RNA sequence: GGGAACGACUCGAGUAGAGUCGAAAAGAUAUGGACCUGGCCACAGCUUUGAUCUAUACUCGGAAACGAGUAUAGGGAGCUGUUGGUUGGGUCCUAAGUCAAACGUGGAAACUUCGGUUUCCACGAAGUAUGUAGUAAUGUUCGCAUUACUACAUACAAAAGAAACAACAACAACAAC
Reactivity to DMS in 0.01 (KOAc 150mM, MgCl2 10mM, bicine 150mM(pH8.5), 24C), signal-to-noise 8, nucleotides 027 to 126: g000a040u010a300u010g000g010a010c010c000u000g000g010c000c000a030c010a000g010c000u000u000u030g010a080u020c010u000a000u000a010c010u000c000g000g000a130a120a250c000g010a020g000u000a000u000a010g000g000g010a010g020c000u000g000u010u000g040g020u000u000g010g010g000u000c000c000u000a010a080g010u000c040a110a120a300c020g020u000g000g000a010a000a010c010u000u010c280g020g000u000u000u000c000c000a000c000g000a020a060
Reactivity to 2A3 in 0.01 (KOAc 150mM, MgCl2 10mM, bicine 150mM(pH8.5), 24C), signal-to-noise 8, nucleotides 027 to 126: g020a020u070a060u140g000g000a000c000c010u010g020g020c010c000a000c010a010g020c010u300u300u110g060a050u070c000u000a000u000a010c000u000c010g000g030a060a090a050c010g000a000g000u000a010u000a000g000g000g000a000g010c010u030g030u190u070g000g000u010u000g000g010g000u000c000c000u000a020a000g010u010c030a040a040a090c020g000u000g000g010a020a000a010c000u050u090c300g160g000u010u000u000c000c000a000c000g000a010a020